Chemical mapping of a 177-nucleotide RNA with DMS and 2A3. Source: RMDB library OK1LIB, as collected in RNAgym.
[RMDB]
RNA sequence: GGGAACGACUCGAGUAGAGUCGAAAAUUUUGAAAUAUUGGAGUAUUUAAACCGUUUUGUGUAUCAUUCACAAUACUUUCUUCCAUACUACUGCUCUCUUGAAGUUCUUGGGAAGAGCCGAAAAUAAGGUACGAGUAAUAUUCGUAUUACUCGUACCAAAAGAAACAACAACAACAAC
Reactivity to DMS in 0.01 (KOAc 150mM, MgCl2 10mM, bicine 150mM(pH8.5), 24C), signal-to-noise 3, nucleotides 027 to 126: u010u020u040u000g010a030a080a090u010a070u010u010g000g020a070g000u020a050u030u020u010a080a110a120c100c150g000u000u020u010u050g040u020g030u010a090u010c210a060u020u010c020a000c030a010a000u010a010c080u010u000u010c040u010u020c000c050a050u000a120c070u010a110c080u000g010c030u000c010u000c010u000u000g020a060a160g030u020u010c100u000u010g010g000g000a040a060g000a040g030c000c080g000a080a020a070a080u050a080a120
Reactivity to 2A3 in 0.01 (KOAc 150mM, MgCl2 10mM, bicine 150mM(pH8.5), 24C), signal-to-noise 7, nucleotides 027 to 126: u080u070u020u170g050a040a040a010u140a080u040u060g020g000a060g050u100a190u050u210u160a090a120a040c060c040g030u060u010u040u000g020u020g010u040a180u300c070a070u200u120c010a000c000a000a010u030a040c020u010u090u060c010u080u050c010c010a040u030a110c030u030a040c030u050g020c000u000c000u000c010u020u020g040a150a070g050u150u050c020u040u050g050g000g020a090a120g010a030g010c030c010g170a070a080a040a070u240a170a100